Conditions: 150 mM KOAc, 10 mM MgCl2 and 150 mM bicine (pH 8.5), 24 C.
Chemical mapping of a 177-nucleotide RNA with DMS and 2A3.
DMS (dimethyl sulfate) methylates the pairing face of unpaired adenines and cytosines.
Values cover nucleotides 27 to 126.
For DMS, 1,199 sequencing reads were counted.
DMS adducts were read by reverse transcription with MarathonRT.

RNA sequence: GGGAACGACUCGAGUAGAGUCGAAAAGUACGAUUUUUCGAAAUCGUACGAAGGUCAGGUGGCAGCACCACGACACUCGUCGCGGCGACCGAGCCGAACAGAAUAUGUGUAAUUUCGAUUACACAAAAUGCCCAAGAUCAUUCGUGAUCUUGGGCAUAAAAGAAACAACAACAACAAC
Reactivity to DMS in 0.01 (KOAc 150mM, MgCl2 10mM, bicine 150mM(pH8.5), 24C), signal-to-noise 2, nucleotides 027 to 126: g000u000a030c000g000a010u000u000u000u000u020c220g000a010a000a010u000c000g000u000a000c020g000a080a050g000g010u010c050a070g010g030u000g010g010c170a130g000c040a060c000c000a020c070g010a030c070a110c190u000c180g020u000c030g020c010g020g000c070g000a030c050c030g000a280g010c000c000g020a040a080c200a090g010a080a090u010a100u000g020u010g000u000a020a000u000u000u000c170g000a030u000u000a010c000a000c000a030a020a090
Reactivity to 2A3 in 0.01 (KOAc 150mM, MgCl2 10mM, bicine 150mM(pH8.5), 24C), signal-to-noise 1, nucleotides 027 to 126: g010u000a000c020g000a020u000u000u000u000u060c120g080a020a000a000u000c000g010u010a010c010g000a060a010g030g010u040c030a020g000g060u030g010g000c040a050g020c000a040c050c000a020c070g000a020c030a020c040u160c060g000u040c040g000c010g040g000c010g040a020c070c010g000a030g050c010c020g020a100a000c010a080g280a200a040u180a090u160g020u000g000u000a040a000u040u040u100c170g070a010u010u030a000c000a020c000a000a080a000